[RMDB]
RNA sequence: GGGAACGACUCGAGUAGAGUCGAAAACUAAAAAGACUGAAGAGGAAGCCAAGCAAAAGGAGCAAAUCACAGCACUGUCUAAAGAUCUGAGCUCAGAGAAGAAUCGCUGUGCAGAGCUGCAGAAAAACGUAUGAUAAUCAUUCGUGAUUAUCAUACGAAAAGAAACAACAACAACAAC
Reactivity to DMS in 0.01 (KOAc 150mM, MgCl2 10mM, bicine 150mM(pH8.5), 24C), signal-to-noise 7, nucleotides 027 to 126: c040u010a030a080a080a140a070g020a100c060u000g000a070a060g010a100g020g000a070a100g010c040c090a040a080g000c090a050a040a060a060g000g010a060g010c030a050a100a100u000c040a050c040a030g020c030a120c120u010g010u010c050u010a070a090a090g010a090u000c040u000g000a080g020c090u000c030a050g010a070g020a090a070g000a110a070u000c110g010c040u010g000u000g000c100a060g000a120g010c020u000g000c080a060g010a040a070a040a080a120
Reactivity to 2A3 in 0.01 (KOAc 150mM, MgCl2 10mM, bicine 150mM(pH8.5), 24C), signal-to-noise 6, nucleotides 027 to 126: c020u080a070a060a030a040a020g110a050c070u080g040a040a010g030a050g060g020a030a020g010c010c030a030a020g030c030a050a060a040a070g040g020a050g020c020a040a050a040u080c010a010c010a040g030c000a020c060u080g060u040c030u110a090a100a060g060a070u010c020u050g030a030g050c060u060c090a020g020a000g020a170a030g040a050a040u080c060g000c030u030g000u030g020c020a000g010a020g030c020u080g020c030a030g130a040a060a020a010a000
Overview: An RNA of 177 nucleotides, treated with DMS and 2A3 and read out base by base. The RNA was probed in 150 mM KOAc, 10 mM MgCl2 and 150 mM bicine (pH 8.5) at 24 C. The 2A3 profile rests on 10,975 reads. For 2A3 the reverse transcriptase was SuperScript II with manganese. Source: RMDB library OK2TST, as collected in RNAgym.